[RMDB]
RNA sequence: GGGAACGACUCGAGUAGAGUCGAAAAUUGUGUCAUAUGUAUUCCAACAGCAUGUGGCACUAACUUUCGGGCAGUUGGAAUACCUGGAAGUGACUCAGUGCUCCUAAUCUAAGUACUGAGUGAACUUGUCAACUAAGAUUAGGAGUUGGCAAGUGUACAGGUCAGGAUUAUUCGUAAUCCUGACCUGAAAAGAAACAACAACAACAAC
Reactivity to 2A3 in 0.01 (KOAc 150mM, MgCl2 10mM, bicine 150mM(pH8.5), 24C), signal-to-noise 3, nucleotides 027 to 156: u080u060g000u000g000u020c010a000u030a010u010g090u090a130u230u230c150c060a090a020c060a110g010c000a010u000g000u010g000g020c020a010c010u020a020a030c000u000u000u020c000g030g010g000c030a150g010u080u100g070g070a070a090u090a050c000c000u010g010g010a010a000g010u030g070a010c000u000c010a000g000u000g000c000u080c030c040u100a150a120u040c030u070a060a000g000u010a030c000u000g000a000g020u020g000a040a010c000u000u000g000u000c000a000a000c010u030a060a040g140a300u140u230a100g300g000a010g080u000u000g000g000c000a000a000g010u040g010u060a020
Reactivity to DMS in 0.01 (KOAc 150mM, MgCl2 10mM, bicine 150mM(pH8.5), 24C), signal-to-noise 1, nucleotides 027 to 156: u020u000g000u000g030u000c000a000u000a000u000g070u000a140u000u000c180c270a090a160c070a250g000c000a070u020g000u000g000g050c010a000c050u010a010a000c040u000u000u000c010g020g040g140c010a140g010u000u000g040g000a290a160u000a060c000c010u040g010g000a040a040g010u000g010a110c030u000c010a010g070u000g030c000u000c030c090u010a130a110u040c200u000a080a000g000u000a010c010u030g000a080g010u000g030a080a030c000u020u000g030u000c030a000a020c020u000a090a250g050a300u000u000a120g000g000a030g000u000u000g000g010c000a030a030g040u000g030u030a130

Chemical mapping of a 207-nucleotide RNA with 2A3 and DMS. The RNA was probed in 150 mM KOAc, 10 mM MgCl2 and 150 mM bicine (pH 8.5) at 24 C. For 2A3 the reverse transcriptase was SuperScript II with manganese. DMS adducts were read by reverse transcription with MarathonRT.